[RMDB]
Conditions: 150 mM KOAc, 10 mM MgCl2 and 150 mM bicine (pH 8.5), 24 C. An RNA of 177 nucleotides, treated with 2A3 and DMS and read out base by base. The 2A3 profile rests on 5,591 reads. Source: RMDB library TTRDES, as collected in RNAgym. Values are in units of 0.01, from 0 to 300, in steps of 10. 2A3 adducts were read by reverse transcription with SuperScript II with manganese.

RNA sequence: GGGAACGACUCGAGUAGAGUCGAAAAGAUAUGGAUGAUCAGAGGGAGACGGUAUCGGAAACGAUAUUUCGUCGACGAUCUCUAUCAUCCUAAGUCAAAGGCUGAGCAUCUUCGGAUGCUCAGCCAACUUACCGUGAUUGUUCGCAAUCACGGUAAGAAAAGAAACAACAACAACAAC
Reactivity to 2A3 in 0.01 (KOAc 150mM, MgCl2 10mM, bicine 150mM(pH8.5), 24C), signal-to-noise 2, nucleotides 027 to 126: g030a010u060a030u130g000g010a000u000g010a010u070c280a050g030a010g010g050g020a070g010a020c010g000g010u000a000u010c010g040g000a070a000a030c000g000a000u000a030u090u300u230c020g000u000c010g000a050c000g010a020u010c010u000c000u000a010u010c000a000u000c000c000u010a070a010g030u000c030a130a160a100g010g000c050u050g000a000g040c050a030u040c010u050u130c300g120g010a010u010g000c000u010c000a020g000c010c000a000a000
Reactivity to DMS in 0.01 (KOAc 150mM, MgCl2 10mM, bicine 150mM(pH8.5), 24C), signal-to-noise 3, nucleotides 027 to 126: g020a060u000a300u000g010g000a010u000g000a010u000c260a010g020a030g010g000g000a060g020a020c000g000g000u010a010u000c000g010g000a100a090a190c010g010a010u000a000u000u020u010c020g020u000c010g000a050c300g000a080u000c000u000c000u000a030u000c000a000u010c000c010u000a000a100g000u000c040a150a110a180g000g050c000u000g000a000g020c000a000u000c000u000u010c300g050g010a010u010g010c000u000c000a000g020c000c010a010a010